[RMDB]
RNA sequence: GGGAACGACUCGAGUAGAGUCGAAAACAUCAUCCACUUUAUUACUAUGCAUCUUACUUUACAAUUCGUGCGUCAGAUUUUGAUUUAAUCACGAUGAUUAAAGAUAAAACAAGCAUUCGAAAUACUGCGGAGAGAUACGGUUCGCCGUAUCUCUCCGAAAAGAAACAACAACAACAAC
Reactivity to 2A3 in 0.01 (KOAc 150mM, MgCl2 10mM, bicine 150mM(pH8.5), 24C), signal-to-noise 1, nucleotides 027 to 126: c030a060u130c000a020u110c000c020a050c030u110u090u010a030u140u070a090c090u030a030u080g030c000a020u000c020u080u000a070c060u040u130u000a040c020a050a200u020u000c000g020u000g000c040g020u030c020a100g050a300u140u080u080u080g050a030u090u050u050a000a040u090c000a000c100g060a040u040g000a000u020u070a050a010a060g030a080u270a040a020a050a000c060a080a000g000c000a010u120u030c120g010a030a030a020u120a050c090u150g070
Source: RMDB library OK2TST, as collected in RNAgym. This 177-nucleotide RNA was probed chemically with 2A3. The 2A3 profile rests on 563 reads. Reactivities are given for positions 27 through 126. The reactions ran in a buffer of 150 mM KOAc, 10 mM MgCl2 and 150 mM bicine (pH 8.5), at 24 C.